Conditions: 150 mM KOAc, 10 mM MgCl2 and 150 mM bicine (pH 8.5), 24 C. An RNA of 177 nucleotides, treated with DMS and 2A3 and read out base by base. For DMS the reverse transcriptase was MarathonRT.

RNA sequence: GGGAACGACUCGAGUAGAGUCGAAAAGAAUAACAGAUGAAGGUGACUAUGAGGUAAAACUCCGCAGCCUGAUUCGCUUUCUCGAAUGCGUAGUGGAAGUUAUUAAAAUGCCAAGAGGAAAACUCAAAGUACGGUAAUGCUUCGGCAUUACCGUACUAAAAGAAACAACAACAACAAC
Reactivity to DMS in 0.01 (KOAc 150mM, MgCl2 10mM, bicine 150mM(pH8.5), 24C), signal-to-noise 2, nucleotides 027 to 126: g080a080a100u010a080a080c100a100g000a040u010g000a210a030g080g020u000g000a160c180u000a040u010g000a150g040g000u000a020a050a070a230c000u000c060c090g000c090a220g020c000c030u000g000a130u010u000c000g000c120u000u000u010c030u060c080g000a040a010u030g000c030g000u040a000g070u050g000g040a010a040g010u000u000a070u010u030a100a000a050a040u060g010c000c020a070a110g000a050g000g000a120a090a100a120c050u010c060a030a050
Reactivity to 2A3 in 0.01 (KOAc 150mM, MgCl2 10mM, bicine 150mM(pH8.5), 24C), signal-to-noise 2, nucleotides 027 to 126: g050a000a060u070a020a020c080a110g000a000u080g030a070a000g000g000u050g110a020c000u030a100u300g000a000g000g000u010a000a050a180a030c000u080c020c000g080c050a000g000c000c080u120g000a000u000u000c000g000c000u010u070u080c000u000c040g120a150a000u230g080c120g000u000a030g070u050g130g020a150a000g050u020u020a060u040u020a020a100a150a040u270g100c060c080a020a000g010a040g120g060a070a020a020a020c000u000c020a030a030